Structure probing data (2A3 and DMS) for a 177-nucleotide construct. The RNA was probed in 150 mM KOAc, 10 mM MgCl2 and 150 mM bicine (pH 8.5) at 24 C. Source: RMDB library 15KREP, as collected in RNAgym. For 2A3, 2,482 sequencing reads were counted. Values cover nucleotides 27 to 126.
RNA sequence: GGGAACGACUCGAGUAGAGUCGAAAAACCGUCUGGAAUCAGGUAGUCACAUAUCCCUCGCUUAACUACGCUGGGGCUUUGUGGGACAUUACAGUUAUAAACAAUGUGGACAAUGAAAUUGUUAAGUGUUGAAUACAAAGUUCGCUUUGUAUUCAACAAAAGAAACAACAACAACAAC
Reactivity to 2A3 in 0.01 (KOAc 150mM, MgCl2 10mM, bicine 150mM(pH8.5), 24C), signal-to-noise 3, nucleotides 027 to 126: a010c020c020g020u000c020u060g050g060a070a120u110c010a050g130g000u070a020g130u050c000a000c000a030u030a040u010c000c000c010u000c020g010c020u140u140a200a060c070u120a060c160g010c000u020g000g000g010g000c020u010u020u020g000u010g010g020g040a000c010a010u060u090a020c000a030g030u120u070a150u120a170a050a010c040a060a020u110g070u110g110g010a000c030a050a040u190g120a110a090a060u060u010g020u060u050a100a070g050u030
Reactivity to DMS in 0.01 (KOAc 150mM, MgCl2 10mM, bicine 150mM(pH8.5), 24C), signal-to-noise 3, nucleotides 027 to 126: a100c020c020g020u000c040u000g000g010a130a080u010c080a080g030g010u010a090g010u010c000a030c020a040u000a110u000c020c030c000u010c300g000c020u010u000a060a110c210u030a130c180g000c050u000g010g020g000g000c160u000u000u000g030u000g000g020g010a040c030a060u000u010a070c000a010g010u010u000a100u010a070a040a070c070a040a030u010g010u000g020g000a030c110a040a030u010g000a060a050a280u000u000g000u000u010a060a070g010u000